[RMDB]
This 207-nucleotide RNA was probed chemically with 2A3 and DMS. For 2A3, 4,707 sequencing reads were counted. Reactivities are rounded to 0.1 and cut off at 0 and 3. 2A3 adducts were read by reverse transcription with SuperScript II with manganese. Source: RMDB library OK3TST, as collected in RNAgym.

RNA sequence: GGGAACGACUCGAGUAGAGUCGAAAAUCAUGGUGGCAACAACGCUGAAGGGGAGGACGUGCAGUGCAUAGGCCAGCAUCAUCUGCCACUUCUGGUAGAGGCCGUCCUGACUCUCCUGGUCGCUGACAGCUCGCAGCACGGGAACUGGGGAUGGAAACUAAUUAAAAUCAUUCGUGAUUUUAAUUAGAAAAGAAACAACAACAACAAC
Reactivity to 2A3 in 0.01 (KOAc 150mM, MgCl2 10mM, bicine 150mM(pH8.5), 24C), signal-to-noise 4, nucleotides 027 to 156: u140c060a050u060g010g000u000g020g000c000a040a020c000a010a010c080g010c030u090g040a060a050g010g010g010g010a020g030g010a020c040g050u110g020c040a030g030u020g050c040a070u090a120g060g000c020c020a010g050c030a050u100c020a030u010c050u030g010c000c020a090c070u230u100c100u110g030g000u020a010g020a020g010g000c000c010g010u010c000c010u030g010a070c010u020c010u010c030c010u030g070g010u070c060g000c020u030g040a110c030a050g050c050u090c100g040c020a010g010c010a000c000g000g010g020a030a030c050u110g020g000g010g010a020u080g010g020a070a050a050
Reactivity to DMS in 0.01 (KOAc 150mM, MgCl2 10mM, bicine 150mM(pH8.5), 24C), signal-to-noise 3, nucleotides 027 to 156: u010c040a090u020g020g030u000g010g010c030a060a120c020a050a050c060g020c010u010g020a100a080g000g020g000g030a080g000g010a060c060g010u010g040c040a150g020u000g000c070a140u000a150g030g020c000c040a100g020c060a120u020c070a110u000c040u000g000c000c010a060c130u010u010c060u010g060g040u010a030g020a090g010g000c040c020g010u000c020c010u010g040a140c040u000c040u000c030c010u000g020g030u010c070g020c030u010g000a150c040a080g010c060u000c080g000c050a110g000c050a100c050g000g000g020a060a070c070u000g030g010g000g020a130u000g010g000a140a120a210